[RMDB]
RNA sequence: GGGAACGACUCGAGUAGAGUCGAAAACUAAACUGACCCACCCACAAUUUAUCCAAAAAAUUUAUCCACCUAACCCCAGAUCACUGCAAACGAAAUGUAUAUCACUAUUCACGCGUGGUUCCAAUUAUCAAUGGUAUAAGUUCGCUUAUACCAUUGAAAAAGAAACAACAACAACAAC
Reactivity to 2A3 in 0.01 (KOAc 150mM, MgCl2 10mM, bicine 150mM(pH8.5), 24C), signal-to-noise 2, nucleotides 027 to 126: c010u110a070a040a020c070u050g070a060c010c020c000a020c020c020c010a040c010a040a050u040u100u120a070u100c030c000a000a060a030a080a080a080u120u180u060a080u090c000c000a040c030c010u020a050a080c000c020c000c020a010g010a030u030c020a020c050u060g000c040a080a050a030c040g060a070a070a040u060g040u010a050u020a010u100c010a020c040u080a090u050u100c050a040c040g040c000g000u010g020g000u000u040c000c020a050a020u070u030a080
Reactivity to DMS in 0.01 (KOAc 150mM, MgCl2 10mM, bicine 150mM(pH8.5), 24C), signal-to-noise 4, nucleotides 027 to 126: c050u000a040a080a140c070u010g000a120c040c020c030a090c080c020c030a070c080a060a050u010u000u000a060u000c030c070a000a020a060a080a070a060u000u010u000a080u000c050c030a030c030c050u000a090a110c050c020c050c050a070g000a060u000c030a030c030u000g010c050a050a060a110c090g000a060a040a080u010g000u000a070u020a050u010c060a040c030u000a080u000u000c020a050c080g020c070g030u000g000g010u000u000c030c020a060a070u010u000a080
About this RNA: Structure probing data (2A3 and DMS) for a 177-nucleotide construct. Reactivities are given for positions 27 through 126. Source: RMDB library RFMREP, as collected in RNAgym.